Source: RMDB library 15KREP, as collected in RNAgym. Chemical mapping of a 177-nucleotide RNA with 2A3 and DMS. The RNA was probed in 150 mM KOAc, 10 mM MgCl2 and 150 mM bicine (pH 8.5) at 24 C. The 2A3 profile rests on 1,014 reads. 2A3 is a SHAPE reagent: it acylates the 2'-hydroxyl of flexible nucleotides of all four kinds.
[RMDB]
RNA sequence: GGGAACGACUCGAGUAGAGUCGAAAAUCUUCUGAUCGGACUGGCUCAUCCUCGGAAACGGGGGCGGCGGCGUCCGUUCUCUAUUCUUUUCUUUUGAAAGAGGAGACGGGUCUCCGCCCGCCCCCAGCGUUUAUUAGAUCUUCGGAUCUAAUAAACGAAAAGAAACAACAACAACAAC
Reactivity to 2A3 in 0.01 (KOAc 150mM, MgCl2 10mM, bicine 150mM(pH8.5), 24C), signal-to-noise 1, nucleotides 027 to 126: u030c010u110u000c010u050g050a070u050c050g020g040a000c010u020g080g000c000u000c090a040u020c000c010u000c020g000g010a090a130a070c070g000g010g000g010g040c000g000g000c000g000g010c010g020u010c010c000g030u160u060c000u040c010u000a260u160u060c010u100u070u060u020c080u080u290u120u300g030a010a000a010g010a000g020g000a010g000a000c000g000g010g080u100c030u000c020c000g030c090c030c000g000c030c090c000c000c010a000g010
Reactivity to DMS in 0.01 (KOAc 150mM, MgCl2 10mM, bicine 150mM(pH8.5), 24C), signal-to-noise 1, nucleotides 027 to 126: u000c040u010u010c080u020g010a050u010c080g000g000a040c060u000g000g030c020u010c070a200u000c000c010u010c050g000g010a060a110a120c130g000g000g000g010g040c040g010g010c000g000g010c300g000u000c000c000g020u010u000c000u020c000u000a120u030u020c000u010u000u000u000c140u030u010u010u030g010a010a030a030g020a030g000g000a030g000a010c010g000g000g000u000c030u010c010c000g000c100c030c130g010c000c000c000c000c000a000g010